[RMDB]
RNA sequence: GGGAACGACUCGAGUAGAGUCGAAAAUAUUCUCCAGUAAAUGUGAUAAUAAUGUCAUCUGUUAACAUAAAAAAAGUUUGACUUCACAAAAGCAGCUGGAAAUGGACAACCACAAUAUGCAUAAAUCCAAUUGGAACGUUUUCGAACGUUCCAAUUGAAAAGAAACAACAACAACAAC
Reactivity to DMS in 0.01 (KOAc 150mM, MgCl2 10mM, bicine 150mM(pH8.5), 24C), signal-to-noise 2, nucleotides 027 to 126: u040a050u000u000c120u040c020c050a040g000u000a060a140a250u000g030u000g010a070u020a070a070u000a070a130u010g010u010c020a000u000c010u000g010u050u000a070a110c210a100u090a000a000a180a050a120a050a010g000u000u000u000g000a000c010u040u000c010a010c040a020a070a090a060g000c130a160g000c070u010g010g000a000a010a070u010g000g000a070c160a030a170c010c000a060c250a090a040u000a020u030g000c140a060u000a060a100a010u010c130
Reactivity to 2A3 in 0.01 (KOAc 150mM, MgCl2 10mM, bicine 150mM(pH8.5), 24C), signal-to-noise 4, nucleotides 027 to 126: u080a010u010u070c050u000c020c000a020g000u060a000a140a140u040g000u010g040a060u040a240a040u110a120a090u240g020u000c000a010u000c010u010g100u170u110a140a070c120a100u300a090a180a030a030a010a020a010g010u070u030u020g000a000c000u000u000c000a000c000a030a060a010a060g080c060a030g020c000u000g000g090a010a010a010u040g060g020a000c000a060a040c030c030a050c040a050a040u150a080u260g090c080a030u120a170a080a070u060c040
Chemical mapping of a 177-nucleotide RNA with DMS and 2A3. High 2A3 reactivity points to a flexible backbone, as in loops and unpaired stretches. The RNA was probed in 150 mM KOAc, 10 mM MgCl2 and 150 mM bicine (pH 8.5) at 24 C. It was measured as part of the RMDB libraries RFM100 and RFMREP. For 2A3 the reverse transcriptase was SuperScript II with manganese.